[RMDB]
RNA sequence: GGGAACGACUCGAGUAGAGUCGAAAAUAUGAGUUAAUACAGCGGUUUGAGUAUUGGACAAUGUUUUGCACCAGUGUUAACACAUCAUCAUCGGAAGCAUUUCUGAUAGGUGUUAACUACUUAGGUGAAUUUAGUGAGAAACCAAUUGUAGACGGAAGGAAGGUUCAAGAUUCGUCUUGAACCUUCCAAAAGAAACAACAACAACAAC
Reactivity to 2A3 in 0.01 (KOAc 150mM, MgCl2 10mM, bicine 150mM(pH8.5), 24C), signal-to-noise 2, nucleotides 027 to 156: u300a150u060g030a040g050u100u230a070a070u050a150c040a020g090c060g100g000u030u110u130g030a040g030u090a140u110u130g010g020a020c030a130a080u120g050u100u170u100u240g040c000a000c030c000a010g000u020g030u000u000a010a000c010a010c000a070u130c030a040u040c000a000u000c070g000g050a020a000g080c170a240u040u060u000c010u000g010a010u020a030g080g000u030g000u010u000a000a000c020u110a000c000u110u120a030g000g000u010g050a000a020u060u000u000a050g020u050g020a050g020a040a020a020c030c010a010a020u060u010g040u040a060g040a150c070g010g060a040a060
Reactivity to DMS in 0.01 (KOAc 150mM, MgCl2 10mM, bicine 150mM(pH8.5), 24C), signal-to-noise 1, nucleotides 027 to 156: u000a090u010g040a190g090u000u000a080a080u000a090c050a070g040c050g060g040u010u000u010g000a140g080u010a060u010u000g040g030a030c050a050a150u000g020u000u000u000u000g020c020a100c000c000a050g030u010g050u000u000a010a030c000a010c030a120u010c150a120u020c090a100u000c020g010g000a040a060g030c170a120u010u000u000c010u010g000a000u010a200g000g020u010g010u000u000a000a010c000u000a040c060u000u010a060g050g010u010g000a040a010u000u010u000a090g000u000g030a210g000a090a080a100c000c020a050a100u000u000g000u000a100g020a130c040g000g030a180a270